[RMDB]
RNA sequence: GGGAACGACUCGAGUAGAGUCGAAAAUUAUAUAGCGUGUGCAAGACGCUGAACUUGCCAUGAUCUGGAACUUUAGUGCUGAGGUCCGAGUUCCAGAUCAUCUUUUCGGACCUCAGCACUAAUAUAAGAUAGGACUAAAGUUCGCUUUAGUCCUAUCAAAAGAAACAACAACAACAAC
Reactivity to DMS in 0.01 (KOAc 150mM, MgCl2 10mM, bicine 150mM(pH8.5), 24C), signal-to-noise 4, nucleotides 027 to 126: u010u010a110u000a210u010a060g010c020g020u000g000u010g010c020a020a010g020a110c050g020c180u020g000a090a060c020u000u000g000c010c030a020u000g010a110u010c060u000g010g010a100a120c200u000u000u000a010g010u000g010c000u000g010a020g020g010u000c000c000g010a030g000u000u000c010c020a070g000a080u000c170a040u010c010u000u000u010u000c000g010g000a020c010c000u000c010a010g010c000a000c000u000a000a010u000a060u010a080a130
Reactivity to 2A3 in 0.01 (KOAc 150mM, MgCl2 10mM, bicine 150mM(pH8.5), 24C), signal-to-noise 1, nucleotides 027 to 126: u150u040a080u030a050u130a150g030c000g010u010g090u110g030c000a000a000g020a020c050g010c300u050g010a090a020c000u000u010g010c000c010a010u020g010a110u040c000u020g040g030a030a080c020u050u030u000a000g000u020g010c010u000g000a000g000g000u000c010c000g000a000g020u060u050c000c010a000g010a000u010c000a000u000c000u020u100u020u010c010g000g000a000c000c000u000c010a000g000c000a000c000u000a000a000u000a000u000a020a000